[RMDB]
RNA sequence: GGGAACGACUCGAGUAGAGUCGAAAAGAGUGUCGGCGGAUACCUCCGGGCAGCUUGUCUGCUUGCAUGCUCCCAUGGGCUGGCUCCUGCUUGCAGUCCCAGCUUCCGGAAUGAGAGGGAGAGCGCACUUUGGGUCUGCAUUCGUGCAGACCCAAAGAAAAGAAACAACAACAACAAC
Reactivity to 2A3 in 0.01 (KOAc 150mM, MgCl2 10mM, bicine 150mM(pH8.5), 24C), signal-to-noise 3, nucleotides 027 to 126: g080a030g020u080g020u050c020g030g020c030g000g000a040u070a140c000c020u000c010c000g000g040g010c020a000g000c010u140u230g080u120c000u070g040c000u000u050g000c050a010u090g000c000u100c040c030c000a090u210g000g010g000c070u030g000g000c010u030c060c020u070g000c000u010u040g030c020a000g000u090c020c000c000a000g010c000u070u020c010c000g040g060a110a130u070g030a070g010a090g080g030g010a090g000a020g020c030g000c000a020
Reactivity to DMS in 0.01 (KOAc 150mM, MgCl2 10mM, bicine 150mM(pH8.5), 24C), signal-to-noise 2, nucleotides 027 to 126: g010a150g000u000g000u000c030g050g000c000g010g000a070u020a060c060c010u020c030c000g000g000g000c130a010g020c040u000u010g000u020c010u000g000c060u010u000g010c180a100u050g000c070u000c030c010c050a200u060g000g010g040c120u020g000g020c030u000c190c050u000g020c000u000u010g000c010a040g000u030c300c070c000a120g000c000u020u020c040c040g010g000a060a040u030g000a090g030a000g000g000g000a010g000a100g010c020g000c080a120
The record gives the reactivity of an RNA of 177 nucleotides to 2A3 and DMS.
DMS adducts were read by reverse transcription with MarathonRT.